[RMDB]
RNA sequence: GGGAACGACUCGAGUAGAGUCGAAAAGCGUCCUGGUUCGCCAGGACGCAAAUAAAUGGUAGACUGAGACCGUCUAACUCAGAUAACCAGUAAUAGACGGAAAAACUGACUUGUUCGCAAGUCAGAACCUAGGAUACAGGUUCGCCUGUAUCCUAGGAAAAGAAACAACAACAACAAC
Reactivity to DMS in 0.01 (KOAc 150mM, MgCl2 10mM, bicine 150mM(pH8.5), 24C), signal-to-noise 2, nucleotides 027 to 126: g000c040g020u010c000c010u010g000g000u000u010c210g040c020c000a000g000g020a000c000g040c000a000a020a030u000a030a050a050u000g010g030u000a120g010a120c000u000g000a000g010a200c010c020g000u000c020u000a020a170c010u000c000a000g000a060u020a110a290c020c030a070g000u000a050a160u000a000g010a050c030g010g010a220a060a010a080a150c010u010g010a010c010u000u000g020u000u010c180g000c010a010a010g000u000c000a000g010a030a070
Reactivity to 2A3 in 0.01 (KOAc 150mM, MgCl2 10mM, bicine 150mM(pH8.5), 24C), signal-to-noise 2, nucleotides 027 to 126: g000c010g000u000c010c000u010g020g020u020u060c180g020c060c010a000g010g000a000c000g000c000a000a000a000u010a000a010a020u080g090g040u050a030g080a300c000u000g020a010g040a100c010c000g010u010c020u030a260a170c000u000c010a010g000a040u070a030a100c020c010a010g000u020a030a170u000a030g010a010c000g010g000a040a060a020a020a020c000u000g000a000c000u000u020g020u100u130c280g000c100a000a010g000u000c000a010g000a010a000
This 177-nucleotide RNA was probed chemically with DMS and 2A3. Conditions: 150 mM KOAc, 10 mM MgCl2 and 150 mM bicine (pH 8.5), 24 C. For 2A3 the reverse transcriptase was SuperScript II with manganese. For DMS the reverse transcriptase was MarathonRT. The 2A3 profile rests on 4,502 reads. The DMS profile rests on 2,013 reads.